Conditions: 150 mM KOAc, 10 mM MgCl2 and 150 mM bicine (pH 8.5), 24 C.
Structure probing data (DMS and 2A3) for a 177-nucleotide construct.
For DMS the reverse transcriptase was MarathonRT.
Reactivities are rounded to 0.1 and cut off at 0 and 3.
For DMS, 32,928 sequencing reads were counted.
[RMDB]
RNA sequence: GGGAACGACUCGAGUAGAGUCGAAAAGUUAUGUUGGAAUUACCGAACUUCAGCAACAGUGGUAAUUAUGUUAGCAUGACAGGCGGAAGAUUUGGUGUUACAAACGAUAGAACUACUGAUGAUAUUGAGCCUAAAUAUUAUUCGUAAUAUUUAGGCUAAAAGAAACAACAACAACAAC
Reactivity to DMS in 0.01 (KOAc 150mM, MgCl2 10mM, bicine 150mM(pH8.5), 24C), signal-to-noise 9, nucleotides 027 to 126: g010u000u000a050u010g010u000u000g010g000a050a040u000u010a020c010c000g010a030a040c020u000u000c020a040g010c040a040a040c110a280g020u000g000g000u000a010a030u000u010a090u010g010u000u000a030g010c010a010u000g010a150c300a060g000g000c020g000g010a030a020g000a180u000u000u010g010g020u000g010u000u000a060c040a040a030a060c070g000a090u000a070g000a050a050c050u000a120c110u010g010a110u010g010a120u010a110u000u010g000
Reactivity to 2A3 in 0.01 (KOAc 150mM, MgCl2 10mM, bicine 150mM(pH8.5), 24C), signal-to-noise 3, nucleotides 027 to 126: g020u020u040a050u150g040u010u020g050g050a060a030u090u070a100c000c010g010a020a010c030u060u030c020a020g000c020a030a050c020a100g030u020g070g110u010a040a010u080u090a100u250g100u030u050a050g080c000a000u020g040a060c040a050g090g010c020g030g030a030a020g010a100u010u020u060g010g000u010g020u020u030a030c050a040a090a010c040g020a030u050a100g120a030a010c020u130a030c030u100g040a090u080g100a020u140a150u240u130g080